About this RNA: Source: RMDB library OK2TRN, as collected in RNAgym. Structure probing data (2A3 and DMS) for a 177-nucleotide construct. The reactions ran in a buffer of 150 mM KOAc, 10 mM MgCl2 and 150 mM bicine (pH 8.5), at 24 C.
RNA sequence: GGGAACGACUCGAGUAGAGUCGAAAACUAUCAAAUCGCUGACCAAACCAUCCAUAACACCAACCUGUUUGUGUUGUUCAAGUCUAGGGAUGUGAAGCUUACAUAUAGUUCAAGUGGCUCAAAUAACGGACAUAUAACGAUUCGUCGUUAUAUGUCCAAAAGAAACAACAACAACAAC
Reactivity to 2A3 in 0.01 (KOAc 150mM, MgCl2 10mM, bicine 150mM(pH8.5), 24C), signal-to-noise 3, nucleotides 027 to 126: c020u030a000u120c060a010a080a090u090c040g000c060u030g040a050c010c070a050a020a000c070c000a010u000c010c010a060u060a100a020c020a020c030c020a020a040c010c050u070g100u200u160u070g090u050g020u000u030g040u030u060c090a140a000g030u000c050u120a050g000g000g040a010u020g070u020g060a020a000g020c000u030u070a020c040a070u170a010u060a090g040u020u000c050a110a060g060u070g100g000c020u010c050a090a100a030u170a110a020c090
Reactivity to DMS in 0.01 (KOAc 150mM, MgCl2 10mM, bicine 150mM(pH8.5), 24C), signal-to-noise 6, nucleotides 027 to 126: c020u010a050u010c180a040a100a110u000c160g010c040u010g020a190c200c080a050a080a170c130c010a040u000c040c020a080u000a030a030c020a070c070c020a040a080c040c050u000g010u010u000u010g020u000g020u000u000g020u000u020c110a070a080g020u000c070u010a070g000g010g020a080u010g000u000g010a090a060g010c050u000u020a070c110a100u000a060u000a050g000u000u000c040a100a120g030u010g010g000c020u000c050a040a040a090u010a070a100c210

DMS adducts were read by reverse transcription with MarathonRT.
The DMS profile rests on 5,502 reads.
For 2A3, 4,293 sequencing reads were counted.